[RMDB]
RNA sequence: GGGAACGACUCGAGUAGAGUCGAAAAGAGUGGACCUGACUCUAGUACGAGAGGACCGAGUUGGACGUACCUCUAGUGUAUCAGUUGUGCCGCUAGGUGCAUUGCUGAGUAGCUACGUGCGGUCGAGAGCACACCACAGUUUCGACUGUGGUGUGCUAAAAGAAACAACAACAACAAC
Reactivity to 2A3 in 0.01 (KOAc 150mM, MgCl2 10mM, bicine 150mM(pH8.5), 24C), signal-to-noise 2, nucleotides 027 to 126: g110a000g020u120g010g010a030c010c060u030g000a030c000u000c010u020a020g060u110a090c090g000a000g000a010g050g100a020c010c020g050a060g070u030u070g020g000a000c000g000u030a010c000c040u000c020u000a010g020u020g050u180a000u000c000a020g000u000u020g030u040g020c000c000g050c120u140a090g080g060u060g000c000a000u050u030g010c000u000g020a060g020u150a010g000c010u000a030c130g020u020g010c020g030g040u030c000g010a040g000
Reactivity to DMS in 0.01 (KOAc 150mM, MgCl2 10mM, bicine 150mM(pH8.5), 24C), signal-to-noise 3, nucleotides 027 to 126: g000a060g020u010g030g010a150c100c030u000g000a030c030u010c000u000a030g000u010a090c050g020a060g000a300g010g070a180c060c010g000a120g010u010u010g000g000a060c040g000u010a010c010c010u020c030u000a010g020u000g000u050a290u000c010a000g000u040u000g010u000g000c020c010g000c240u030a090g000g040u010g040c010a020u020u000g010c000u000g000a000g000u060a300g000c000u000a000c170g000u020g010c000g000g020u010c040g000a180g030